[RMDB]
RNA sequence: GGGAACGACUCGAGUAGAGUCGAAAAAGAUUUACGGGGUGUCGUAUUGGCAUUGCAAAUGGGGGAAGAAGUGAAUAUUCCACUGCAAGUUUCAAUAACUUUUUUGAUUGUCAGAUUUGUUUUAAUGUGGUUGGAGGUAAUUGGAACCGCUGUGGAAAGUAUUUGAAUAGUUCGCUAUUCAAAUACUAAAAGAAACAACAACAACAAC
Reactivity to DMS in 0.01 (KOAc 150mM, MgCl2 10mM, bicine 150mM(pH8.5), 24C), signal-to-noise 1, nucleotides 027 to 156: a110g000a100u000u000u000a050c090g000g000g030g060u000g030u000c020g020u000a070u000u010g000g040c020a110u000u000g050c040a020a060a100u010g000g010g030g030g000a070a100g000a080a060g010u000g000a060a120u000a110u000u000c020c010a020c020u010g010c060a100a080g000u010u000u010c020a000a040u000a090a080c030u000u010u010u020u000u000g020a140u010u000g000u000c050a070g000a090u010u000u010g000u010u000u010u000a050a050u000g050u000g040g010u010u000g020g010a000g020g000u000a050a060u000u000g010g000a020a040c040c100g020c000u000g030u000g000g000a030a070
Reactivity to 2A3 in 0.01 (KOAc 150mM, MgCl2 10mM, bicine 150mM(pH8.5), 24C), signal-to-noise 2, nucleotides 027 to 156: a000g040a020u100u120u160a050c050g000g040g010g000u040g030u050c050g000u070a100u020u140g020g000c050a050u020u190g000c010a030a060a120u120g010g010g000g010g000a010a030g020a080a000g020u050g050a040a040u090a100u090u000c000c000a000c010u010g030c050a060a140g000u010u020u000c010a010a000u050a070a040c020u120u100u160u070u020u150g050a060u120u070g070u090c010a050g080a150u060u150u120g050u020u080u140u130a100a060u100g020u020g060g030u040u000g020g010a000g000g000u030a060a090u020u010g020g000a020a000c020c030g000c010u030g010u000g040g000a030a050